[RMDB]
RNA sequence: GGGAACGACUCGAGUAGAGUCGAAAACGAGCCAGCAGGGUCACCGAGGCGCCCAGUCCCUGCCAGGCGGUCGCCAUCUCCACACCGACGCCGCCGGCGCCGACGAUCGCAAGCCGGUCGGGGACCGAGCUAAUCCCAAUUUCGAUUGGGAUUAGCUAAAAGAAACAACAACAACAAC
Reactivity to DMS in 0.01 (KOAc 150mM, MgCl2 10mM, bicine 150mM(pH8.5), 24C), signal-to-noise 4, nucleotides 027 to 126: c080g020a110g020c030c020a150g010c050a090g010g000g010u000c080a060c070c050g000a130g000g010c050g000c040c010c030a140g000u000c010c030c010u000g000c010c060a110g000g010c010g010g020u000c030g000c040c030a100u000c050u000c040c050a090c110a110c100c040g010a040c060g000c020c020g000c030c040g020g010c050g010c030c030g000a080c030g010a060u000c080g020c080a110a160g000c070c020g010g000u000c020g010g010g000g010a080c050c080g000
Reactivity to 2A3 in 0.01 (KOAc 150mM, MgCl2 10mM, bicine 150mM(pH8.5), 24C), signal-to-noise 2, nucleotides 027 to 126: c030g010a010g050c010c020a020g040c010a020g010g010g010u080c050a020c110c060g030a080g010g030c020g030c020c010c000a020g040u030c010c000c010u000g020c030c020a150g020g040c030g040g030u070c030g000c040c010a070u030c040u030c050c010a050c000a030c070c050g070a040c030g030c050c010g020c020c020g000g000c000g000c020c030g030a050c050g040a060u100c050g000c070a100a040g060c060c030g000g030u050c020g000g000g000g000a000c010c050g030
An RNA of 177 nucleotides, treated with DMS and 2A3 and read out base by base.
The data come from the RNA Mapping Database (RMDB), library OK2TST.
2A3 is a SHAPE reagent: it acylates the 2'-hydroxyl of flexible nucleotides of all four kinds.
Values cover nucleotides 27 to 126.